[RMDB]
RNA sequence: GGGAACGACUCGAGUAGAGUCGAAAAGGGGUCGACUACAACAGCCACGUGCGGAGCUUUGAUCUAUACUGAAGCCUCCACGGUAUAGGGAGCUCCCACGUGGACAUGUAGUCGACGGAGGCACCCAAAGAGUAACUCGGUUCGCCGAGUUACUCAACUCAACUGAAAAGUUCGCUUUUCAGUUGAGAAAAGAAACAACAACAACAAC
Reactivity to 2A3 in 0.01 (KOAc 150mM, MgCl2 10mM, bicine 150mM(pH8.5), 24C), signal-to-noise 2, nucleotides 027 to 156: g010g030g130g030u000c000g010a010c000u000a000c010a300a030c080a180g180c030c000a000c000g000u040g070c300g020g000a000g010c000u300u130u020g000a000u000c010u000a010u010a010c000u040g110a080a020g000c020c000u020c000c000a000c000g020g000u000a000u000a000g000g000g000a000g000c000u000c000c000c000a000c000g000u010g010g000a000c000a040u220g010u000a000g000u000c000g000a000c000g000g000a000g000g010c000a010c000c010c000a070a170a020g010a000g000u000a000a000c000u000c000g000g040u100u090c200g040c050c010g000a000g000u000u000a000c000u010c000a000a000
About this RNA:
Chemical mapping of a 207-nucleotide RNA with 2A3. Conditions: 150 mM KOAc, 10 mM MgCl2 and 150 mM bicine (pH 8.5), 24 C. The 2A3 profile rests on 2,162 reads. Reactivities are given for positions 27 through 156.